[RMDB]
RNA sequence: GGGAACGACUCGAGUAGAGUCGAAAAAUCCGGCUCGGGCAAGCGGGCCUCGCCCCGGAGAACUGGCUGGUCGUGAAGCAGAAAGCAAACGGCGAGCUAAUCAUUCUGAACAAGUACCACGACACGAUCCGCGUCAUCCCGCCACUGGCCGGAUGAGACAAUAACAGUGGUUCGCCACUGUUAUUGUAAAAGAAACAACAACAACAAC
Reactivity to DMS in 0.01 (KOAc 150mM, MgCl2 10mM, bicine 150mM(pH8.5), 24C), signal-to-noise 1, nucleotides 027 to 156: a080u000c020c000g050g010c000u010c050g070g000g030c030a050a140g030c000g000g000g010c150c040u010c020g020c020c010c000c050g040g010a080g010a060a140c040u000g070g020c030u010g000g010u000c010g030u000g030a160a220g040c030a120g020a100a130a160g060c050a100a220a130c000g000g040c020g000a060g010c040u000a010a050u000c050a130u010u020c040u010g080a050a110c060a050a060g000u010a080c020c020a060c010g020a080c020a060c030g010a120u000c010c020g050c000g030u010c030a120u000c010c020c010g060c050c050a100c070u020g030g010c010c000g000g010a020u010g000a170g020
Reactivity to 2A3 in 0.01 (KOAc 150mM, MgCl2 10mM, bicine 150mM(pH8.5), 24C), signal-to-noise 4, nucleotides 027 to 156: a010u010c020c010g010g000c130u140c150g030g040g070c120a140a010g010c010g010g010g010c040c010u020c030g010c010c010c010c020g020g020a060g000a080a040c120u060g030g010c010u060g060g000u000c000g000u020g020a180a050g010c050a050g170a170a200a050g040c020a100a100a000c010g020g010c050g050a010g010c040u040a040a040u100c060a050u100u070c050u080g070a080a030c040a230a010g110u120a100c030c020a050c100g060a030c040a010c110g060a040u010c030c010g010c010g030u040c010a110u120c010c010c010g000c010c040a150c070u050g000g000c000c000g000g000a000u000g010a030g010
Structure probing data (DMS and 2A3) for a 207-nucleotide construct. Values cover nucleotides 27 to 156. It was measured as part of the RMDB library OK3TST. For DMS the reverse transcriptase was MarathonRT. For DMS, 2,327 sequencing reads were counted.